[RMDB]
RNA sequence: GGGAACGACUCGAGUAGAGUCGAAAAGCAUUACUAGUCAGUGCGACGUACCUUGACGGUACUGGAUUUCGCCCUUGGGUUAGGUUCGUCAGCAGGACUUAGCGGUAGUUUCCAAUUGGGCACACACCGAUUUGGGUCAAUUCGUUGACCCAAAUCGAAAAGAAACAACAACAACAAC
Reactivity to 2A3 in 0.01 (KOAc 150mM, MgCl2 10mM, bicine 150mM(pH8.5), 24C), signal-to-noise 4, nucleotides 027 to 126: g050c040a050u050u140a100c060u060a030g070u050c050a030g060u010g010c000g070a010c050g000u020a030c000c000u050u160g190a090c050g020g050u050a070c020u020g050g020a060u050u090u120c080g040c020c000c000u040u130g160g000g000u010u000a010g010g050u000u040c010g060u040c100a090g010c010a030g050g020a000c010u000u070a000g010c010g050g030u050a080g060u020u030u030c010c000a040a090u080u070g030g010g010c050a010c000a000c020a010c010
Reactivity to DMS in 0.01 (KOAc 150mM, MgCl2 10mM, bicine 150mM(pH8.5), 24C), signal-to-noise 3, nucleotides 027 to 126: g000c080a030u020u000a060c040u020a070g010u040c050a020g000u050g020c020g010a130c060g000u000a040c000c000u020u050g080a080c140g000g000u000a000c080u010g010g020a170u020u030u030c100g030c060c000c010u000u020g010g010g010u000u010a040g000g030u000u000c030g010u010c040a120g020c110a080g010g000a030c020u000u000a050g010c030g010g000u010a050g000u020u010u000c000c010a090a110u040u010g020g020g050c000a090c070a100c090a140c110

The record gives the reactivity of an RNA of 177 nucleotides to 2A3 and DMS. The data come from the RNA Mapping Database (RMDB), library OK1LIB. Conditions: 150 mM KOAc, 10 mM MgCl2 and 150 mM bicine (pH 8.5), 24 C. The DMS profile rests on 4,153 reads.